[RMDB]
RNA sequence: GGGAACGACUCGAGUAGAGUCGAAAAGGUGCCCCUAGUACGAGAGGAACAGGGUGCCGCGGCCUCUGGUCUACCGGUUGUCCUCCCGGGCAUCGCCGGGCAGCUACGCCGCAGCCGAUAAGGCCUGAAAGCAUCUAAGGCCGAAGCGGCCCCCGAAUCAUGACAAAUUGUUCGCAAUUUGUCAUGAAAAAGAAACAACAACAACAAC
Reactivity to 2A3 in 0.01 (KOAc 150mM, MgCl2 10mM, bicine 150mM(pH8.5), 24C), signal-to-noise 2, nucleotides 027 to 156: g000g000u000g000c010c010c000c000u010a010g010u000a010c000g010a010g010a060g140g000a000a000c000a030g000g000g000u000g010c000c000g000c010g000g010c000c000u000c010u010g010g040u050c100u270a010c000c000g000g010u050u010g010u000c010c010u130c060c090c020g000g010g000c030a060u080c080g010c040c010g000g010g000c020a000g000c000u000a020c100g000c010c000g020c000a000g000c010c000g000a000u010a000a040g000g000c000c010u040g050a120a080a040g130c050a060u060c050u160a040a040g000g010c000c000g010a150a030g010c000g000g020c000c000c000c000c030g030a030a060
Reactivity to DMS in 0.01 (KOAc 150mM, MgCl2 10mM, bicine 150mM(pH8.5), 24C), signal-to-noise 2, nucleotides 027 to 156: g050g030u000g030c000c020c000c040u000a180g030u000a140c030g020a220g000a300g010g000a100a160c240a040g000g000g020u010g040c000c020g000c000g000g000c040c000u000c030u010g040g000u010c010u010a060c010c010g040g040u000u010g030u000c000c010u000c130c210c180g000g010g000c010a030u020c050g010c000c020g030g020g020c090a050g000c010u000a040c050g000c000c020g010c010a140g020c010c010g020a060u010a140a300g030g020c000c000u000g000a170a170a110g020c150a090u000c030u000a250a080g000g050c000c000g000a050a130g000c030g010g000c010c050c020c000c030g010a120a300
Overview
This 207-nucleotide RNA was probed chemically with 2A3 and DMS. Conditions: 150 mM KOAc, 10 mM MgCl2 and 150 mM bicine (pH 8.5), 24 C. For DMS the reverse transcriptase was MarathonRT. It was measured as part of the RMDB library PDB130.